About this RNA
Conditions: 150 mM KOAc, 10 mM MgCl2 and 150 mM bicine (pH 8.5), 24 C. Chemical mapping of a 177-nucleotide RNA with 2A3 and DMS.
RNA sequence: GGGAACGACUCGAGUAGAGUCGAAAAAGCCUGAGUACGCUCAGGCAACAUGUCAGUACUGGUGAGUCUGGAUGCUGAUGAUAUGUUAGUUCCCAUCAGCUCCAAGGCUGAUCAGUAGUGAUGUGAACCUUCUACUAGAGUUCGCUCUAGUAGAAGGAAAAGAAACAACAACAACAAC
Reactivity to 2A3 in 0.01 (KOAc 150mM, MgCl2 10mM, bicine 150mM(pH8.5), 24C), signal-to-noise 9, nucleotides 027 to 126: a000g000c000c000u000g000a000g000u030a040c250g010c090u000c000a000g000g000c000a000a010c000a000u000g000u000c000a020g190u000a000c000u000g030g000u030g120a000g010u000c000u000g010g020a060u260g000c010u000g000a010u000g020a040u050a070u300g260u170u130a160g040u120u080c010c010c000a000u000c000a000g000c000u000c000c010a080a080g010g000c000u060g120a000u000c000a000g000u010a000g040u000g000a000u000g000u000g000a030a030
Reactivity to DMS in 0.01 (KOAc 150mM, MgCl2 10mM, bicine 150mM(pH8.5), 24C), signal-to-noise 5, nucleotides 027 to 126: a090g010c010c000u020g020a010g020u000a080c240g030c010u000c000a020g000g020c010a020a050c010a010u000g010u000c000a010g000u000a010c000u000g000g010u000g000a020g020u000c000u000g000g010a040u030g010c000u000g000a010u000g010a120u040a060u040g020u030u010a150g000u000u010c060c050c000a040u000c000a000g000c010u010c020c010a030a060g010g000c000u000g010a010u000c020a020g010u000a010g020u000g010a020u010g020u000g000a150a160

Background:
For DMS the reverse transcriptase was MarathonRT.